[RMDB]
RNA sequence: GGGAACGACUCGAGUAGAGUCGAAAAAUAAACAGCCUUAGCGUAUGUUUUCAUCCCAACAAAUAAUACGCGAGGUAACAAUGACUGUACGCGUAUUAAUCAGUCAAUAAGGCUAAGGUAAAAAAAAGUGUCAGAUAGGAUUCGUCCUAUCUGACACAAAAGAAACAACAACAACAAC
Reactivity to 2A3 in 0.01 (KOAc 150mM, MgCl2 10mM, bicine 150mM(pH8.5), 24C), signal-to-noise 1, nucleotides 027 to 126: a020u160a020a100a020c080a110g000c010c000u000u000a000g000c000g030u260a060u130g060u020u100u110u200c040a050u050c060c010c020a010a030c010a000a120a020u080a000a000u000a000c000g010c000g020a050g030g150u070a020a000c050a090a030u080g020a000c030u010g020u090a110c000g000c020g000u000a000u000u030a030a120u060c000a000g010u000c010a010a050u110a120a050g030g000c030u010a000a010g070g060u140a110a000a080a000a000a000a000a000

Conditions: 150 mM KOAc, 10 mM MgCl2 and 150 mM bicine (pH 8.5), 24 C. Chemical mapping of a 177-nucleotide RNA with 2A3. Values are in units of 0.01, from 0 to 300, in steps of 10. For 2A3, 820 sequencing reads were counted. 2A3 adducts were read by reverse transcription with SuperScript II with manganese.